[RMDB]
RNA sequence: GGGAACGACUCGAGUAGAGUCGAAAAAGCAGUCGAUUCGUCGACUGCUAAUGGGUGGGGACUACAUCACAGGUUCUUCGCUAGCCCUCUUUGGACCAGUAAAAAAGAGCUUAUUCGUAAGCUCUAAAGCGAUCUACUAAUUCGUUAGUAGAUCGCUAAAAGAAACAACAACAACAAC
Reactivity to 2A3 in 0.01 (KOAc 150mM, MgCl2 10mM, bicine 150mM(pH8.5), 24C), signal-to-noise 1, nucleotides 027 to 126: a010g010c000a000g010u000c000g000a010u000u060c100g070u000c000g140a000c000u010g000c000u000a010a040u040g050g020g010u110g030g030g000g020a000c000u080a020c080a120u080c020a040c040a140g010g000u100u030c000u130u110c020g000c060u030a090g000c010c050c000u020c070u070u090u040g000g070a070c060c060a060g160u220a000a050a090a060a040a000g000a000g000c000u000u010a000u030u090c070g060u040a010a010g000c000u050c000u020a030a000
Reactivity to DMS in 0.01 (KOAc 150mM, MgCl2 10mM, bicine 150mM(pH8.5), 24C), signal-to-noise 1, nucleotides 027 to 126: a030g010c010a020g000u000c010g020a020u000u010c210g020u000c000g020a010c000u000g000c000u000a000a020u000g000g000g000u000g010g000g000g020a090c030u010a070c130a110u030c170a040c160a090g000g000u010u000c060u000u000c060g000c030u000a080g000c000c000c000u000c050u010u010u000g000g000a090c040c050a080g010u020a010a030a080a040a080a000g010a040g000c000u000u000a030u000u000c180g010u000a000a000g000c000u000c010u000a000a040